[RMDB]
RNA sequence: GGGAACGACUCGAGUAGAGUCGAAAAGUGGGAUGACCCGCAGGGCGUCCCGAUCUCGGGGAUCCUGUUCGGCGGCCGCCGCAAGACCACGGUUCCGCUGGUCACCGAGGCGCGCGACUGGCAGCACUACGGUCGAGAAUUUCGAUUCUCGACCGUAAAAAGAAACAACAACAACAAC
Reactivity to 2A3 in 0.01 (KOAc 150mM, MgCl2 10mM, bicine 150mM(pH8.5), 24C), signal-to-noise 2, nucleotides 027 to 126: g150u120g050g060g070a020u020g210a290c000c020c040g190c070a230g000g010g000c000g020u050c000c000c000g030a120u040c040u050c020g030g000g000g030a110u060c000c000u000g040u100u250c010g070g000c000g000g010c050c050g000c020c000g040c110a070a000g090a020c000c050a000c000g010g010u220u110c040c020g020c100u040g000g060u000c000a020c040c120g000a080g060g010c070g000c000g010c000g030a080c040u030g000g030c000a000g000c020a050c030
Reactivity to DMS in 0.01 (KOAc 150mM, MgCl2 10mM, bicine 150mM(pH8.5), 24C), signal-to-noise 1, nucleotides 027 to 126: g000u000g000g000g000a040u000g000a190c000c020c100g020c200a080g000g010g010c090g000u020c000c000c020g040a080u000c050u020c040g000g000g000g000a070u030c120c000u000g000u000u000c000g000g050c030g000g000c040c050g070c030c030g060c010a160a170g000a100c010c040a080c040g040g040u030u050c170c140g010c070u040g000g040u010c050a110c050c030g100a100g010g000c100g000c220g000c000g000a030c010u000g030g000c010a090g020c180a140c060